An RNA of 207 nucleotides, treated with DMS and 2A3 and read out base by base.
[RMDB]
RNA sequence: GGGAACGACUCGAGUAGAGUCGAAAAUCAUUGAGAUGCUGGGCGCUAUGGUCGUCCUCCUCCGGCUGACCUCCUUCUCAGCUGCUGACCGGCGCCGCACAGGCGGCAUCUCAGCUUCGCGUGCAAAAAAAGAAUGGUCGGUUCGCCGACCAUUCAACCUUGAGGAAUUGUUCGCAAUUCCUCAAGGAAAAGAAACAACAACAACAAC
Reactivity to DMS in 0.01 (KOAc 150mM, MgCl2 10mM, bicine 150mM(pH8.5), 24C), signal-to-noise 1, nucleotides 027 to 156: u000c070a110u000u000g020a020g010a010u000g030c000u000g030g010g010c010g020c030u000a060u010g050g000u000c020g000u000c010c040u000c030c020u000c050c000g020g050c010u010g020a060c030c030u000c130c090u000u010c030u000c000a020g000c020u010g020c060u000g020a040c000c020g030g000c010g050c000c000g000c060a120c100a130g020g030c040g000g000c000a010u010c000u000c010a030g010c090u010u000c110g030c060g000u000g040c060a020a010a130a080a100a120a100g000a030a010u000g010g020u000c000g010g000u000u000c300g020c030c010g000a010c010c010a010u010u000c000a040a130
Reactivity to 2A3 in 0.01 (KOAc 150mM, MgCl2 10mM, bicine 150mM(pH8.5), 24C), signal-to-noise 2, nucleotides 027 to 156: u050c040a060u060u100g000a020g010a010u010g000c010u060g040g000g020c010g020c030u110a150u300g000g020u030c030g020u060c090c000u030c010c000u020c010c000g010g020c010u000g000a030c050c060u110c020c020u220u090c030u000c040a000g000c010u020g030c050u040g010a000c000c010g030g010c000g020c010c010g000c010a030c010a010g150g060c020g000g000c000a000u000c000u010c000a000g010c000u220u240c080g030c050g060u120g110c110a090a110a020a060a010a000a040g000a000a000u000g020g010u010c010g000g000u060u050c130g030c030c010g000a000c000c000a000u000u010c000a000a000
About this RNA:
The reactions ran in a buffer of 150 mM KOAc, 10 mM MgCl2 and 150 mM bicine (pH 8.5), at 24 C. For 2A3 the reverse transcriptase was SuperScript II with manganese. For DMS, 4,130 sequencing reads were counted. The data come from the RNA Mapping Database (RMDB), library M2RFPK. DMS adducts were read by reverse transcription with MarathonRT.